Structure probing data (DMS and 2A3) for a 177-nucleotide construct. Conditions: 150 mM KOAc, 10 mM MgCl2 and 150 mM bicine (pH 8.5), 24 C. 2A3 adducts were read by reverse transcription with SuperScript II with manganese. It was measured as part of the RMDB libraries RFM100 and RFMREP.
[RMDB]
RNA sequence: GGGAACGACUCGAGUAGAGUCGAAAAUCAUUCCGCUCAACUCUUCGAUUGUAGACGACUAUCAAUAAACUGGGUGCUGUAAGCUUCCGAGUAGCGUUCAGUUACGAGGGGUUGAGGCUUUUCCUUUAGCUGAUCUAAUUUUCGAAUUAGAUCAGCUAAAAGAAACAACAACAACAAC
Reactivity to DMS in 0.01 (KOAc 150mM, MgCl2 10mM, bicine 150mM(pH8.5), 24C), signal-to-noise 1, nucleotides 027 to 126: u030c230a230u010u000c000c040g000c010u000c010a030a040c010u000c000u000u000c040g000a090u000u010g000u000a050g030a230c090g010a130c010u000a110u000c090a020a040u010a040a030a040c050u010g000g000g010u000g010c010u000g000u030a040a200g010c190u000u000c170c150g000a140g000u000a030g010c020g000u010u000c000a040g010u010u010a300c010g020a010g000g000g000g010u000u010g050a010g000g000c100u020u000u020u000c000c030u000u000u000
Reactivity to 2A3 in 0.01 (KOAc 150mM, MgCl2 10mM, bicine 150mM(pH8.5), 24C), signal-to-noise 6, nucleotides 027 to 126: u160c030a040u070u040c000c010g030c000u000c000a000a000c000u020c000u010u000c000g090a080u010u100g040u080a050g030a110c030g210a240c050u130a060u230c060a160a110u110a150a130a040c030u040g020g000g010u020g000c020u050g110u280a140a080g030c040u180u050c060c090g070a040g040u060a010g010c010g000u010u000c010a030g010u060u050a030c010g000a000g020g000g000g000u000u000g000a000g000g000c000u040u030u020u000c000c000u000u010u010